[RMDB]
RNA sequence: GGGAACGACUCGAGUAGAGUCGAAAAGAUAUGGAUCAUGGUGUAGCUGCGCCUUCGGAAACGAAGGAUGCAGCGCAGAUACCAUGAGUCCUAAGUCAAAACUGCACGAGGUUCGCCUCGUGCAGAAUCUUUGAACAGAGUUCGCUCUGUUCAAAGAAAAAGAAACAACAACAACAAC
Reactivity to 2A3 in 0.01 (KOAc 150mM, MgCl2 10mM, bicine 150mM(pH8.5), 24C), signal-to-noise 1, nucleotides 027 to 126: g000a000u020a000u030g000g000a000u010c000a000u010g020g020u020g010u020a040g000c010u000g000c010g000c000c010u000u010c000g010g000a000a000a000c010g000a000a000g010g000a010u020g000c010a000g000c000g000c000a010g000a000u000a000c000c000a010u000g000a010g040u030c000c000u000a000a010g030u000c010a000a010a120a190c010u010g000c000a000c000g000a010g030g050u110u130c260g230c030c000u000c000g000u000g030c000a000g000a000a010
Reactivity to DMS in 0.01 (KOAc 150mM, MgCl2 10mM, bicine 150mM(pH8.5), 24C), signal-to-noise 3, nucleotides 027 to 126: g000a010u000a010u010g000g010a100u000c000a000u000g010g010u000g020u000a000g040c000u000g010c000g000c000c000u010u010c000g020g010a000a000a020c010g000a020a010g010g000a020u000g020c000a000g030c010g030c130a090g020a000u000a010c000c000a010u000g000a030g020u010c000c000u000a000a110g000u000c010a110a050a130a160c010u000g010c000a010c000g000a020g010g010u000u020c220g000c000c010u000c010g020u000g000c000a000g000a050a040
An RNA of 177 nucleotides, treated with 2A3 and DMS and read out base by base. The RNA was probed in 150 mM KOAc, 10 mM MgCl2 and 150 mM bicine (pH 8.5) at 24 C. Values cover nucleotides 27 to 126. DMS adducts were read by reverse transcription with MarathonRT. The data come from the RNA Mapping Database (RMDB), library TTRDEL.